Chemical mapping of a 177-nucleotide RNA with DMS and 2A3. 2A3 adducts were read by reverse transcription with SuperScript II with manganese. DMS adducts were read by reverse transcription with MarathonRT. Reactivities are given for positions 27 through 126. For 2A3, 2,648 sequencing reads were counted.
[RMDB]
RNA sequence: GGGAACGACUCGAGUAGAGUCGAAAAUGGGAUUGGUCCGCAACCUCACGCUGACGCAGAUUUACACCGACGGCUACCUGGGUUCGUAUCUGCACCAGGGCCUCACUCAGAUGUGGAGCCUUGCGGAAGCUAUCCGUAUCUUCGGAUACGGAUAGCUAAAAGAAACAACAACAACAAC
Reactivity to DMS in 0.01 (KOAc 150mM, MgCl2 10mM, bicine 150mM(pH8.5), 24C), signal-to-noise 3, nucleotides 027 to 126: u010g010g010g010a180u010u000g010g000u010c000c060g000c010a070a080c150c050u000c070a100c080g000c010u010g000a100c050g020c050a050g010a080u010u010u000a070c110a080c090c040g000a100c090g000g000c070u000a090c040c020u010g010g010g000u000u010c100g000u000a050u000c060u000g000c050a150c080c000a010g000g000g000c010c010u000c020a070c060u000c110a100g000a090u010g000u010g000g010a060g010c030c050u000u000g020c040g000g020a060
Reactivity to 2A3 in 0.01 (KOAc 150mM, MgCl2 10mM, bicine 150mM(pH8.5), 24C), signal-to-noise 3, nucleotides 027 to 126: u060g030g030g060a040u070u110g090g020u030c010c020g020c040a030a060c010c030u030c010a030c030g030c020u030g010a030c050g010c100a020g020a120u090u110u130a100c060a030c010c040g060a100c080g070g040c010u070a080c030c040u020g010g070g000u090u060c030g010u050a190u090c060u080g000c040a040c000c010a020g000g000g000c000c020u030c000a020c010u050c040a130g090a300u170g070u040g020g020a000g000c010c000u030u020g040c020g030g000a020